[RMDB]
RNA sequence: GGGAACGACUCGAGUAGAGUCGAAAACCAGUGAGCCGUGUAGUUAAACUCGGUGCGUUGUAGUAAUACAGGGUGCUAAGCGAGUGGAUAAAGUAACCUUGAAAAAGGUGCGAGCAAUCAUGCAGACUCUCCUGGCAUAGUUCGCUAUGCCAGGAGAAAAAGAAACAACAACAACAAC
Reactivity to DMS in 0.01 (KOAc 150mM, MgCl2 10mM, bicine 150mM(pH8.5), 24C), signal-to-noise 2, nucleotides 027 to 126: c000c030a110g000u040g020a070g020c030c060g100u000g000u020a200g000u010u020a060a080a100c040u000c030g000g040u000g000c180g000u000u000g000u010a050g000u100a070a070u040a000c010a000g000g000g010u000g000c000u020a140a110g000c070g000a050g030u000g000g010a110u000a000a080a160g000u040a030a060c000c000u000u000g000a050a020a110a050a000g000g000u010g020c020g040a060g050c100a040a070u080c040a040u000g000c080a090g030a180c180
Reactivity to 2A3 in 0.01 (KOAc 150mM, MgCl2 10mM, bicine 150mM(pH8.5), 24C), signal-to-noise 2, nucleotides 027 to 126: c000c000a010g110u000g060a000g010c030c010g000u050g010u040a130g080u050u120a040a130a050c000u000c040g020g050u010g000c020g000u000u050g070u090a060g000u050a020a020u020a050c050a010g000g030g040u040g060c000u090a040a030g110c000g000a000g060u040g020g000a130u120a110a050a070g050u000a000a090c030c000u040u000g110a060a010a010a010a000g040g000u020g090c060g000a020g000c030a080a020u060c000a000u090g070c200a020g000a160c010
The record gives the reactivity of an RNA of 177 nucleotides to DMS and 2A3. The RNA was probed in 150 mM KOAc, 10 mM MgCl2 and 150 mM bicine (pH 8.5) at 24 C.